The data come from the RNA Mapping Database (RMDB), library OK1LIB. The record gives the reactivity of an RNA of 177 nucleotides to DMS and 2A3.
RNA sequence: GGGAACGACUCGAGUAGAGUCGAAAAGAGCGUCGAGAGACGAAGAGAAGUGCAUAGAUCCACAACGGAGAACGUAAUAAUGCACGCUUGUGGAUUAGUGUCCGGAACAACGGGCACAAGAGGCAGACGGGCUGCUAAUAUUCGUAUUAGCAGCCCGAAAAGAAACAACAACAACAAC
Reactivity to DMS in 0.01 (KOAc 150mM, MgCl2 10mM, bicine 150mM(pH8.5), 24C), signal-to-noise 2, nucleotides 027 to 126: g020a070g010c000g050u000c000g000a300g010a280g020a090c030g070a110a100g020a010g020a140a020g000u000g020c000a080u020a030g010a020u020c000c010a000c000a000a030c040g030g030a070g040a070a040c160g000u060a080a080u140a140a080u020g010c040a000c000g010c300u000u000g000u000g000g000a000u000u030a090g010u000g000u000c010c000g000g040a090a180c220a200a230c050g000g000g000c000a000c010a060a000g000a130g040g000c000a110g000a140
Reactivity to 2A3 in 0.01 (KOAc 150mM, MgCl2 10mM, bicine 150mM(pH8.5), 24C), signal-to-noise 1, nucleotides 027 to 126: g100a010g060c000g000u000c000g000a010g000a000g020a120c110g000a000a030g100a020g050a170a030g000u040g020c030a010u000a070g000a050u020c000c000a030c040a030a020c000g010g010a240g030a280a000c000g060u010a000a200u100a090a030u300g040c180a020c050g000c010u030u060g000u020g030g000a000u020u020a040g000u000g000u000c000c000g000g000a100a030c100a060a160c070g000g000g000c040a000c000a000a060g040a100g050g020c030a000g000a000
DMS adducts were read by reverse transcription with MarathonRT.